The record gives the reactivity of an RNA of 170 nucleotides to DMS and 2A3.
Values cover nucleotides 27 to 129.
For DMS, 6,853 sequencing reads were counted.
For 2A3, 4,323 sequencing reads were counted.
Conditions: 150 mM KOAc, 10 mM MgCl2 and 150 mM bicine (pH 8.5), 24 C.
For 2A3 the reverse transcriptase was SuperScript II with manganese.

RNA sequence: GGGAACGACUCGAGUAGAGUCGAAAAUGAUGUCCAGUCCCUCUCCCGUCCGAGUGAAGGGAGACUCCGGAACUCCAGUCAUUUGAGGGACGAAUCCGCCCCCGGGCGCUCCCCUCGGACUUCCUCCUGCGGCUCUCCUUCGGGAGAGCCAAAAGAAACAACAACAACAAC
Reactivity to DMS in 0.01 (KOAc 150mM, MgCl2 10mM, bicine 150mM(pH8.5), 24C), signal-to-noise 3, nucleotides 027 to 129: u000g020a070u010g030u000c020c040a110g030u000c070c040c000u000c070u030c040c030c040g050u000c030c050g000a080g020u050g000a180a030g000g000g000a000g020a200c020u020c000c100g010g040a130a170c040u060c000c100a130g020u030c020a090u060u040u080g030a090g050g000g010a170c050g040a070a060u020c110c050g010c050c000c030c030c110g060g010g040c000g000c070u000c010c020c010c020u040c030g050g030a050c050u000u000c000c010u050c000c060u020g010c000
Reactivity to 2A3 in 0.01 (KOAc 150mM, MgCl2 10mM, bicine 150mM(pH8.5), 24C), signal-to-noise 3, nucleotides 027 to 129: u110g070a000u080g060u090c030c040a010g000u010c050c010c000u020c000u010c010c020c020g000u020c010c030g060a000g010u110g060a060a040g010g000g000a010g000a040c020u010c010c040g020g000a020a000c030u070c060c020a020g080u060c060a170u070u070u300g050a100g000g000g010a020c020g050a030a080u060c050c050g050c000c000c000c000c000g010g000g000c030g000c010u000c000c000c000c000u020c000g010g010a030c000u020u050c000c000u010c000c000u010g000c000